Overview: This 177-nucleotide RNA was probed chemically with DMS and 2A3. Values cover nucleotides 27 to 126. DMS adducts were read by reverse transcription with MarathonRT. The reactions ran in a buffer of 150 mM KOAc, 10 mM MgCl2 and 150 mM bicine (pH 8.5), at 24 C.

[RMDB]
RNA sequence: GGGAACGACUCGAGUAGAGUCGAAAAGGUUUUGGGAAAUCAACUGCUAUAGCAGCUAAAUGUAGCGACAAUGAUCUGUGCGUAGCAAUGACUAGCACAUCUGUUGAAUCAUUGAAAUCCAAGAUUAUCGUCCAGAGAAAUUCGUUUCUCUGGACGAAAAAGAAACAACAACAACAAC
Reactivity to DMS in 0.01 (KOAc 150mM, MgCl2 10mM, bicine 150mM(pH8.5), 24C), signal-to-noise 2, nucleotides 027 to 126: g010g020u000u000u000u000g000g000g000a050a080a080u000c130a060a110c020u000g000c010u000a110u000a140g020c030a010g000c080u000a130a070a030u010g000u000a150g020c040g010a060c010a060a110u000g000a040u020c180u010g010u000g000c000g000u010a000g000c060a150a110u000g000a150c000u000a010g000c030a020c000a030u000c060u000g030u000u000g020a170a070u030c020a020u000u010g000a030a080a100u020c030c010a010a020g010a040u000u010a110
Reactivity to 2A3 in 0.01 (KOAc 150mM, MgCl2 10mM, bicine 150mM(pH8.5), 24C), signal-to-noise 2, nucleotides 027 to 126: g030g000u050u070u030u060g020g000g020a080a040a050u070c020a040a080c040u010g000c010u100a100u140a300g040c030a000g000c060u110a080a090a090u090g050u040a060g070c020g010a000c000a050a050u100g010a020u020c030u100g020u010g000c050g110u040a010g000c090a260a210u250g090a160c000u000a000g000c010a020c010a030u090c040u020g120u020u040g050a060a060u020c030a000u010u020g030a050a050a030u050c030c000a000a020g090a010u050u070a040